[RMDB]
RNA sequence: GGGAACGACUCGAGUAGAGUCGAAAAUCGCUGGACACGAAAUAGUUUGUGAGCACUCCGGGUAGCACAUAUAUCACUCUUCACGAUAUUAAUCGGAUCUUGGCGGCUAAAUGAUGAAGAUCCCACCAGGUUAAGCAUGGUUCGCCAUGCUUAACCUAAAAGAAACAACAACAACAAC
Reactivity to 2A3 in 0.01 (KOAc 150mM, MgCl2 10mM, bicine 150mM(pH8.5), 24C), signal-to-noise 3, nucleotides 027 to 126: u080c000g010c010u050g070g020a020c030a020c040g090a000a070a080u180a050g030u040u040u140g080u060g040a030g040c020a010c120u050c030c010g020g010g000u060a030g000c020a000c050a080u130a020u020a030u040c000a020c050u040c030u090u050c020a020c040g010a010u000a040u180u140a140a110u080c010g010g010a040u060c030u050u160g060g010c020g000g010c050u030a060a130a040u130g020a030u110g020a040a000g050a040u010c000c000c000a000c000c010
Reactivity to DMS in 0.01 (KOAc 150mM, MgCl2 10mM, bicine 150mM(pH8.5), 24C), signal-to-noise 1, nucleotides 027 to 126: u030c000g000c040u000g110g000a030c080a110c070g020a040a060a170u030a190g020u000u030u000g000u000g000a210g010c120a110c150u040c040c040g000g000g000u000a060g020c120a000c210a100u000a080u000a010u010c000a000c020u000c050u070u000c030a000c040g000a140u000a160u030u030a000a140u030c000g000g000a160u040c100u020u000g000g020c040g000g000c070u000a100a030a120u000g000a100u000g000a080a040g020a050u030c010c000c160a040c040c100

Chemical mapping of a 177-nucleotide RNA with 2A3 and DMS.
For DMS, 1,147 sequencing reads were counted.
For 2A3 the reverse transcriptase was SuperScript II with manganese.
The 2A3 profile rests on 1,598 reads.